[RMDB]
RNA sequence: GGGAACGACUCGAGUAGAGUCGAAAAUUAUGAUGGUAGGGUGUUAAAACUGGUGCACAAAGAAAGUACUGCUCUUGAAGCAGUGGCGGCCAGACAACCGUUGAGAUAGAUCCACAGAUGAACAACCUAUUUUGUAGUCGUUCGCGACUACAAAAUAAAAAGAAACAACAACAACAAC
Reactivity to 2A3 in 0.01 (KOAc 150mM, MgCl2 10mM, bicine 150mM(pH8.5), 24C), signal-to-noise 4, nucleotides 027 to 126: u140u060a150u150g060a020u020g040g020u040a070g090g010g020u040g040u040u080a010a040a040a040c010u030g030g020u100g030c070a060c050a100a150a060g130a030a050a020g110u050a020c000u000g010c000u040c010u070u250g110a130a000g000c000a000g030u000g020g040c060g030g000c010c000a010g000a040c030a000a010c020c030g000u050u120g020a010g030a080u100a090g110a060u030c000c000a010c020a020g070a050u140g030a040a030c010a050a040c000c010
Reactivity to DMS in 0.01 (KOAc 150mM, MgCl2 10mM, bicine 150mM(pH8.5), 24C), signal-to-noise 5, nucleotides 027 to 126: u010u050a070u010g000a070u010g010g010u020a040g000g000g010u010g000u020u010a040a040a100a110c040u000g000g000u000g010c060a080c130a050a110a150g000a070a110a110g020u000a020c010u000g000c020u010c020u040u020g010a130a040g010c010a020g010u000g010g000c020g010g000c030c010a050g000a060c130a050a090c070c020g010u000u000g000a090g000a100u020a050g000a060u020c020c030a040c100a040g010a100u020g000a090a060c200a090a100c050c040

The data come from the RNA Mapping Database (RMDB), libraries RFM100 and RFMREP. The record gives the reactivity of an RNA of 177 nucleotides to 2A3 and DMS. As a SHAPE reagent, 2A3 marks flexible, mostly unpaired nucleotides at the ribose 2'-OH. 2A3 adducts were read by reverse transcription with SuperScript II with manganese. Reactivities are given for positions 27 through 126. The reactions ran in a buffer of 150 mM KOAc, 10 mM MgCl2 and 150 mM bicine (pH 8.5), at 24 C.